Overview
This 207-nucleotide RNA was probed chemically with DMS and 2A3. Source: RMDB library OK3TST, as collected in RNAgym. Conditions: 150 mM KOAc, 10 mM MgCl2 and 150 mM bicine (pH 8.5), 24 C. In probing experiments dimethyl sulfate is read out at A N1 and C N3, which are open when not base-paired.
RNA sequence: GGGAACGACUCGAGUAGAGUCGAAAAGGCUUAAAUAAGAUUUCACAUGCGUGAAAGCUCUAUGCUUAUCCUAUAACGUGUUGUGCACGUGCAAGUAUGAUGCUCAUUAUUUCUCUCAGCCAUCAGAAGAGAGGCACAGUUCUCCCCUCCCCUGCCGAAUUUGCGUUUAUUUCGAUAAACGCAAAUUAAAAGAAACAACAACAACAAC
Reactivity to DMS in 0.01 (KOAc 150mM, MgCl2 10mM, bicine 150mM(pH8.5), 24C), signal-to-noise 3, nucleotides 027 to 156: g000g030c020u000u020a030a080a170u000a070a060g000a060u000u000u000c030a010c000a170u010g010c230g000u000g000a050a010a020g000c010u010c050u010a110u000g020c000u010u010a060u000c010c010u000a130u010a070a080c080g000u000g010u000u000g010u000g010c060a070c060g020u000g010c060a070a100g030u000a090u000g020a100u000g010c010u000c050a080u010u000a080u000u000u010c030u000c030u000c030a120g010c060c040a090u000c050a090g010a060a100g010a080g000a060g010g030c070a050c050a090g000u000u000c040u000c000c010c020c000u000c020c010c030c040u010g010c090c070g020
Reactivity to 2A3 in 0.01 (KOAc 150mM, MgCl2 10mM, bicine 150mM(pH8.5), 24C), signal-to-noise 3, nucleotides 027 to 156: g000g010c020u050u070a060a040a020u110a190a050g020a060u040u000u010c040a040c050a070u300g130c160g060u010g020a020a020a020g020c030u050c060u070a050u110g000c000u040u050a050u170c020c020u120a110u060a180a010c020g010u020g030u060u150g060u100g010c030a030c080g020u030g050c030a060a050g010u080a050u140g100a080u070g010c030u020c060a050u050u160a080u130u180u020c030u000c010u030c040a050g050c060c020a150u090c030a070g070a190a010g040a050g020a000g010g030c020a040c030a040g000u070u040c020u020c030c020c010c010u010c010c000c000c000u000g040c000c020g020